RNA sequence: GGGAACGACUCGAGUAGAGUCGAAAAGUAAGCAAAGACGUAAUAACCGUCAUGGUAAGUAAACUGAGCGCAUGCCGUAAGAAAUGCAAACGCGUUAUGAUUCAGAACACCUGGUGCGCUAUUAUAAAUUAUCGAGGAUGUUCGCAUCCUCGAUAAUAAAAGAAACAACAACAACAAC
Reactivity to 2A3 in 0.01 (KOAc 150mM, MgCl2 10mM, bicine 150mM(pH8.5), 24C), signal-to-noise 1, nucleotides 027 to 126: g040u090a000a080g090c030a130a000a110g070a040c050g000u050a020a080u050a080a040c030c000g000u020c020a000u080g000g040u180a040a090g010u060a030a230a060c000u020g020a020g000c000g000c010a010u030g000c000c000g010u020a080a080g110a150a090a020u120g020c030a190a040a040c040g000c030g000u000u030a020u030g000a000u000u110c000a000g050a030a000c020a000c000c020u020g000g000u030g000c100g010c030u000a000u020u070a060u050a050a190
Reactivity to DMS in 0.01 (KOAc 150mM, MgCl2 10mM, bicine 150mM(pH8.5), 24C), signal-to-noise 2, nucleotides 027 to 126: g010u010a040a160g040c130a100a080a140g010a130c080g000u000a030a020u000a060a040c250c000g020u010c020a050u030g020g000u000a030a100g000u000a050a080a100c030u000g010a040g010c050g030c020a030u000g010c050c080g030u010a130a130g020a040a080a050u010g020c130a040a070a100c150g000c080g020u000u000a050u010g010a280u010u000c020a020g000a120a040c050a010c010c010u000g040g000u000g000c100g040c040u000a010u000u000a050u000a060a050

About this RNA: The record gives the reactivity of an RNA of 177 nucleotides to 2A3 and DMS. 2A3 is a SHAPE reagent: it acylates the 2'-hydroxyl of flexible nucleotides of all four kinds. For DMS the reverse transcriptase was MarathonRT. The RNA was probed in 150 mM KOAc, 10 mM MgCl2 and 150 mM bicine (pH 8.5) at 24 C. 2A3 adducts were read by reverse transcription with SuperScript II with manganese. The data come from the RNA Mapping Database (RMDB), library OK2TRN.